An RNA of 177 nucleotides, treated with DMS and 2A3 and read out base by base. It was measured as part of the RMDB libraries RFM100 and RFMREP.
[RMDB]
RNA sequence: GGGAACGACUCGAGUAGAGUCGAAAAGAAAGAAAGAACGCCCAGCUAUGUCUGUCUGACCCAGCUGUACUCUCUGGACAUAAAAAGCAGAAAGUGCGACUGGAUCGGAUCGGUAUGGUUGGGAUAAAUAAGGGAUUACAUUCGUGUAAUCCCUUAUAAAAGAAACAACAACAACAAC
Reactivity to DMS in 0.01 (KOAc 150mM, MgCl2 10mM, bicine 150mM(pH8.5), 24C), signal-to-noise 5, nucleotides 027 to 126: g000a110a090a090g010a130a100a110g000a150a110c250g010c000c010c000a010g000c000u000a000u000g000u000c000u010g010u000c000u000g000a020c020c000c010a010g010c010u010g020u000a010c000u010c010u000c000u000g000g000a130c130a110u040a060a080a120a160a120g000c010a010g000a010a010a010g010u000g000c010g000a040c000u000g000g000a040u000c000g000g000a000u000c230g010g000u000a000u000g000g030u000u000g010g010g000a010u020a010a060
Reactivity to 2A3 in 0.01 (KOAc 150mM, MgCl2 10mM, bicine 150mM(pH8.5), 24C), signal-to-noise 6, nucleotides 027 to 126: g070a010a050a010g110a020a110a010g070a090a030c110g010c010c000c000a000g010c000u000a000u010g020u000c010u010g000u000c010u000g000a000c000c000c010a000g010c010u030g000u010a010c000u000c000u000c020u030g040g060a040c030a050u300a130a200a030a030a020g100c010a010g010a020a010a000g000u000g000c000g020a050c010u000g000g000a010u010c000g000g000a010u010c010g000g000u020a000u010g010g010u000u000g000g000g000a000u020a000a030